[RMDB]
RNA sequence: GGGAACGACUCGAGUAGAGUCGAAAACUCACUUAAUUGUUAUUGUGUAAUUACAGCCACCACAGAGAAAUUUAAAGGUCUGUACUAGUUUACUAGGUGUAGCAGAUGCUCCAUGAUGAGAAAGCGCAAAUUGGACAAAUUUCGAUUUGUCCAAUUUAAAAGAAACAACAACAACAAC
Reactivity to 2A3 in 0.01 (KOAc 150mM, MgCl2 10mM, bicine 150mM(pH8.5), 24C), signal-to-noise 2, nucleotides 027 to 126: c000u020c000a070c030u150u290a110a100u160u090g010u080u170a070u100u100g020u010g040u090a060a060u060u090a070c030a050g060c010c000a060c010c000a000c070a010g070a000g090a080a140a200u110u230u110a100a170a000g010g030u010c000u020g030u020a030c030u000a000g150u120u120u100a090c010u000a000g000g020u110g000u020a010g020c010a020g070a050u080g040c000u000c000c030a110u090g010a020u020g010a020g010a120a000a010g060c010g000c090
Reactivity to DMS in 0.01 (KOAc 150mM, MgCl2 10mM, bicine 150mM(pH8.5), 24C), signal-to-noise 5, nucleotides 027 to 126: c010u000c010a120c200u040u020a110a150u010u010g000u000u000a100u010u000g000u000g000u000a070a080u020u000a100c060a070g010c030c020a060c030c030a020c070a100g010a070g010a090a110a130u030u020u020a060a060a050g010g000u000c010u000g000u000a040c010u000a020g010u000u020u010a080c020u000a030g010g010u010g000u020a070g000c010a040g000a030u010g000c020u000c020c050a120u000g000a090u020g010a090g010a060a100a080g010c060g000c130